[RMDB]
RNA sequence: GGGAACGACUCGAGUAGAGUCGAAAAGGAAAUUGGUUCGCCAAUUUCCAAAACUGACUGAUGGACAGACGGAAAACCAAAAACAAAAACAAAAACAACAAAAAAGCGUUCGGUUCGCCGAACGCAAUCUCAUAUGAAUGUUCGCAUUCAUAUGAGAAAAAGAAACAACAACAACAAC
Reactivity to DMS in 0.01 (KOAc 150mM, MgCl2 10mM, bicine 150mM(pH8.5), 24C), signal-to-noise 2, nucleotides 027 to 126: g000g010a010a000a000u010u010g000g020u000u010c270g030c020c000a010a020u000u020u000c000c000a010a010a040a140c060u010g000a060c040u000g000a220u000g010g010a120c010a030g020a070c040g020g000a080a030a080a060c030c040a020a050a040a030a070c110a060a030a060a050a070c130a010a060a100a070a070c050a030a010c060a010a090a100a050a080a120g000c000g040u010u000c010g000g010u000u010c190g000c020c010g010a010a020c010g010c000a000a000
Reactivity to 2A3 in 0.01 (KOAc 150mM, MgCl2 10mM, bicine 150mM(pH8.5), 24C), signal-to-noise 2, nucleotides 027 to 126: g010g000a020a000a000u010u000g020g010u030u050c070g040c050c010a000a010u030u000u000c000c000a030a000a000a030c020u020g080a000c000u020g020a090u140g110g060a040c000a030g010a030c050g050g030a020a060a040a090c020c030a040a040a100a030a030c060a040a110a040a000a010c050a030a090a100a030a010c040a040a010c050a050a120a060a000a010a050g000c000g000u000u000c010g040g040u040u060c200g020c080c000g000a000a000c010g000c000a000a000